Chemical mapping of a 177-nucleotide RNA with 2A3 and DMS. Values cover nucleotides 27 to 126. For DMS, 1,138 sequencing reads were counted. Conditions: 150 mM KOAc, 10 mM MgCl2 and 150 mM bicine (pH 8.5), 24 C.
[RMDB]
RNA sequence: GGGAACGACUCGAGUAGAGUCGAAAACAACGGCUAUGAUAGAUAUGAAUAGAGCACGAGAUAAUGUGCUUACAGAAAGUUGGUUGAAUUGAAUGCAAUUAAUGUUUGGAGGCACUUAGUCUUCUAGCUGUGCAUCAUAGUUCGCUAUGAUGCACAGAAAAGAAACAACAACAACAAC
Reactivity to 2A3 in 0.01 (KOAc 150mM, MgCl2 10mM, bicine 150mM(pH8.5), 24C), signal-to-noise 1, nucleotides 027 to 126: c000a020a020c060g030g000c010u040a020u160g030a100u100a180g170a080u140a050u260g050a210a040u030a080g030a000g140c040a050c110g060a040g010a110u060a090a060u170g020u000g000c000u000u030a030c020a000g110a010a130a000g020u040u060g010g010u010u020g080a070a160u050u120g040a090a030u210g000c020a000a040u030u050a050a040u050g060u030u240u030g020g000a030g020g000c000a000c000u030u090a030g030u010c000u000u000c010u020a030g030
Reactivity to DMS in 0.01 (KOAc 150mM, MgCl2 10mM, bicine 150mM(pH8.5), 24C), signal-to-noise 1, nucleotides 027 to 126: c060a120a100c060g020g000c010u000a020u000g000a130u000a090g000a120u000a070u000g000a150a050u010a110g010a030g020c090a060c160g030a040g000a080u000a020a080u000g000u010g000c000u000u000a100c030a040g000a030a030a100g020u000u010g010g020u000u000g000a100a070u010u000g020a130a090u000g010c040a010a060u000u000a060a030u020g000u000u000u000g000g000a030g000g000c000a020c010u000u000a210g000u000c060u000u000c010u010a060g000